[RMDB]
RNA sequence: GGGAACGACUCGAGUAGAGUCGAAAAGAAUCAGCGUACCUAUUUAGGUUUACGCUCCAAGAUCGGUGGAUAGCAGCCCUAUCAAUAUCUAGGAGAACUGUGCUAUGUUUAGAAGAUUAGGUAGUCUAUUACACAGCCAUGUUCGCAUGGCUGUGAAUCUUCGAGUGAGUUUCGACUCACUCGAAGAAAAAGAAACAACAACAACAAC
Reactivity to DMS in 0.01 (KOAc 150mM, MgCl2 10mM, bicine 150mM(pH8.5), 24C), signal-to-noise 1, nucleotides 027 to 156: g000a040a050u000c050a030g040c030g020u000a060c030c010u000a280u000u000u010a030g000g010u000u000u010a000c000g070c000u000c060c030a120a060g000a100u010c020g020g030u010g050g020a120u000a100g050c050a130g010c050c060c000u010a160u010c060a050a180u000a070u000c100u000a070g000g000a090g000a080a110c070u000g020u000g040c030u000a050u000g000u000u000u010a120g010a070a140g030a110u000u000a080g010g010u010a090g020u010c070u000a140u000u000a270c010a020c000a030g000c010c010a020u010g020u010u000c260g060c040a050u000g010g000c000u000g000u010g000a050a020
Reactivity to 2A3 in 0.01 (KOAc 150mM, MgCl2 10mM, bicine 150mM(pH8.5), 24C), signal-to-noise 1, nucleotides 027 to 156: g030a040a080u120c070a050g000c000g020u020a040c000c000u040a050u120u250u170a030g010g000u100u080u030a000c000g000c000u130c040c000a120a110g100a110u070c010g010g040u000g060g020a040u000a090g030c020a020g000c020c020c020u040a020u050c000a030a130u080a040u150c030u010a000g040g000a040g040a140a010c010u040g000u020g050c030u070a110u050g000u000u060u020a110g020a200a100g020a150u100u000a000g120g000u000a000g050u010c040u000a210u020u080a090c000a020c000a000g050c030c010a010u020g000u050u030c070g000c040a000u000g000g000c000u080g000u000g000a000a040
The record gives the reactivity of an RNA of 207 nucleotides to DMS and 2A3. For 2A3 the reverse transcriptase was SuperScript II with manganese. Conditions: 150 mM KOAc, 10 mM MgCl2 and 150 mM bicine (pH 8.5), 24 C. For 2A3, 457 sequencing reads were counted. For DMS, 1,960 sequencing reads were counted.